Notes
The record gives the reactivity of an RNA of 177 nucleotides to DMS and 2A3. The 2A3 profile rests on 1,741 reads. For DMS, 1,945 sequencing reads were counted. DMS adducts were read by reverse transcription with MarathonRT. The RNA was probed in 150 mM KOAc, 10 mM MgCl2 and 150 mM bicine (pH 8.5) at 24 C.
RNA sequence: GGGAACGACUCGAGUAGAGUCGAAAAGAUAUGGAUAGCGAAGAACUACCCAACGAAGAACAUAUCUUCGGAGCUCGGAAACGAGCUCCGAAGAUAUGGGAGUUGUGGUAGGGAGCUAUCCUAAGUCGAUAUCUAAAUCGUUCGCGAUUUAGAUAUCAAAAGAAACAACAACAACAAC
Reactivity to DMS in 0.01 (KOAc 150mM, MgCl2 10mM, bicine 150mM(pH8.5), 24C), signal-to-noise 2, nucleotides 027 to 126: g000a130u020a300u000g000g010a030u010a000g020c000g010a180a160g010a170a220c010u000a010c010c000c000a010a000c010g000a210a190g000a180a150c000a020u000a000u010c000u000u000c000g000g010a000g040c000u000c020g030g010a130a090a210c020g020a030g030c030u010c010c000g000a020a000g010a010u000a000u000g010g000g010a110g010u000u000g000u010g030g000u010a000g020g020g000a150g010c010u000a010u000c000c000u010a030a040g000u000c110
Reactivity to 2A3 in 0.01 (KOAc 150mM, MgCl2 10mM, bicine 150mM(pH8.5), 24C), signal-to-noise 1, nucleotides 027 to 126: g090a040u100a100u250g020g000a010u000a000g000c040g180a300a010g100a300a120c000u010a020c000c000c010a040a010c020g240a260a190g030a110a010c020a010u060a000u000c000u010u060c030g020g030a000g000c000u050c000g060g010a300a070a030c010g090a000g120c010u010c000c020g030a020a000g060a010u000a010u010g000g020g030a070g000u030u050g100u290g030g010u020a000g000g000g000a010g000c000u000a000u000c000c000u010a120a000g040u070c060